The record gives the reactivity of an RNA of 207 nucleotides to 2A3.
The 2A3 profile rests on 1,029 reads.
RNA sequence: GGGAACGACUCGAGUAGAGUCGAAAAUUACCGCCCAGGAUGGGGUGCAGCGUUCCUGCAAUACCCAGGGCACCUAGGUGCAGCCUUGUAGUUUUAGUGGACUUUAGGCUAAAGAAUUUCACUAGCAAAAAUCUUUAAGGGUUCGCCCUUAAAGAAACUACUGAAUAACCUUCGGGUUAUUCAGUAGAAAAGAAACAACAACAACAAC
Reactivity to 2A3 in 0.01 (KOAc 150mM, MgCl2 10mM, bicine 150mM(pH8.5), 24C), signal-to-noise 2, nucleotides 027 to 156: u110u050a110c020c040g000c040c000c010a030g080g010a020u060g000g000g000g030u020g020c000a010g010c030g110u160u160c020c010u020g000c020a010a100u240a260c000c000c040a020g020g030g000c020a030c000c030u090a070g010g110u020g030c020a010g010c010c010u040u040g070u070a050g010u010u030u040u020a000g000u010g020g000a000c000u070u050u010a010g000g040c000u090a060a150a000g070a020a010u050u240u220c000a000c030u040a020g040c020a030a080a150a180a220u030c000u040u000u000a020a010g030g010g040u030u120c190g130c000c000c000u000u010a000a000a010g000a000a000a010